[RMDB]
Description:
The record gives the reactivity of an RNA of 177 nucleotides to 2A3 and DMS. The DMS profile rests on 5,316 reads. The 2A3 profile rests on 11,567 reads. The reactions ran in a buffer of 150 mM KOAc, 10 mM MgCl2 and 150 mM bicine (pH 8.5), at 24 C.
RNA sequence: GGGAACGACUCGAGUAGAGUCGAAAAGAUAUGGAUACGAAGGCGCCAACGAGGUCGGAAACGACUACCCACCGUUGGAACUACGCUUUUUGUAUCCUAAGUCAAAACCUGAACUUCGGUUCAGGAACAUAUGGACACAGUUCGCUGUGUCCAUAUGAAAAGAAACAACAACAACAAC
Reactivity to 2A3 in 0.01 (KOAc 150mM, MgCl2 10mM, bicine 150mM(pH8.5), 24C), signal-to-noise 4, nucleotides 027 to 126: g030a010u100a040u210g000g010a010u010a000c010g000a010a010g020g010c010g010c020c000a000a000c010g000a010g000g030u000c010g000g010a040a090a020c030g010a010c020u100a080c050c080c020a040c010c020g010u000u010g000g050a030a020c070u170a040c030g000c010u080u070u010u150u300g010u000a000u000c010c000u020a140a010g070u030c020a010a020a100a190c010c000u000g010a010a000c000u050u120c300g150g000u010u000c000a010g000g000a020a000
Reactivity to DMS in 0.01 (KOAc 150mM, MgCl2 10mM, bicine 150mM(pH8.5), 24C), signal-to-noise 5, nucleotides 027 to 126: g000a040u010a300u000g000g010a010u000a010c010g010a010a000g000g000c000g020c000c010a000a010c020g000a100g010g010u000c010g000g000a070a110a190c010g000a010c000u010a030c070c010c060a300c070c010g000u000u000g000g000a050a020c110u020a300c020g000c010u000u000u000u010u000g010u000a000u000c000c000u000a010a080g000u010c030a100a050a080a060c010c010u000g000a000a010c010u000u010c140g030g010u000u000c000a000g000g000a070a100